[RMDB]
RNA sequence: GGGAACGACUCGAGUAGAGUCGAAAAUCCUAAUUAACGUUUUUUAUAUUCAUCGUUUCUUAGAGCCGUAAUUGUGCUGAUAUCAAUAUCAGGGAAGAACAUACCAUAUAGAGGUGUCAAGUACACCCAUUUGAGGACUUUUCGAAGUCCUCAAAUGAAAAGAAACAACAACAACAAC
Reactivity to DMS in 0.01 (KOAc 150mM, MgCl2 10mM, bicine 150mM(pH8.5), 24C), signal-to-noise 5, nucleotides 027 to 126: u010c010c000u020a080a070u030u010a060a090c130g000u020u010u010u040u050u020a060u030a110u040u010c090a100u020c080g000u000u010u010c030u000u020a060g010a120g010c050c010g020u010a080a080u000u000g020u000g000c000u000g000a030u000a030u010c100a080a110u000a030u000c050a090g000g010g010a100a080g020a060a070c150a080u010a100c030c060a050u030a070u010a060g000a200g000g000u000g010u000c020a050a080g010u010a020c010a040c050c020
Reactivity to 2A3 in 0.01 (KOAc 150mM, MgCl2 10mM, bicine 150mM(pH8.5), 24C), signal-to-noise 4, nucleotides 027 to 126: u010c000c010u010a040a060u060u120a050a030c030g020u000u000u010u000u150u070a250u050a070u100u140c080a060u090c070g000u020u030u000c030u040u070a080g000a040g120c050c020g080u090a130a130u110u060g010u020g030c020u010g010a000u010a010u140c090a120a040u020a000u070c010a010g050g020g030a100a040g050a030a010c010a070u100a070c020c030a030u060a000u010a150g060a000g030g020u020g020u000c030a080a060g030u030a020c010a020c010c000